[RMDB]
Chemical mapping of a 177-nucleotide RNA with DMS.
Conditions: 150 mM KOAc, 10 mM MgCl2 and 150 mM bicine (pH 8.5), 24 C.
DMS adducts were read by reverse transcription with MarathonRT.
RNA sequence: GGGAACGACUCGAGUAGAGUCGAAAAGUUGCUGUCGCUUUUGUUUCCGAGACGGACGCAGGGUGCGGCAGUCCAAUUCGGUGGAAGCGGCCUGUGGAGGAUAGAGGCAGAGAUGGUCCGGCUGCAAGCUAAUGGACCCUUUCGAGGGUCCAUUAGCAAAAGAAACAACAACAACAAC
Reactivity to DMS in 0.01 (KOAc 150mM, MgCl2 10mM, bicine 150mM(pH8.5), 24C), signal-to-noise 1, nucleotides 027 to 126: g020u000u000g000c020u000g000u000c010g000c020u000u020u010u000g000u020u000u000c000c000g030a190g020a130c290g000g000a000c080g010c030a050g000g010g010u000g020c060g040g010c020a070g010u000c080c030a040a240u010u000c050g000g000u010g020g000a070a070g000c070g010g010c050c040u000g010u000g000g000a070g020g010a090u010a060g000a090g020g010c070a050g010a070g010a120u000g020g010u000c070c020g000g000c030u010g020c100a080a150
The data come from the RNA Mapping Database (RMDB), library OK2TST. For DMS, 1,598 sequencing reads were counted.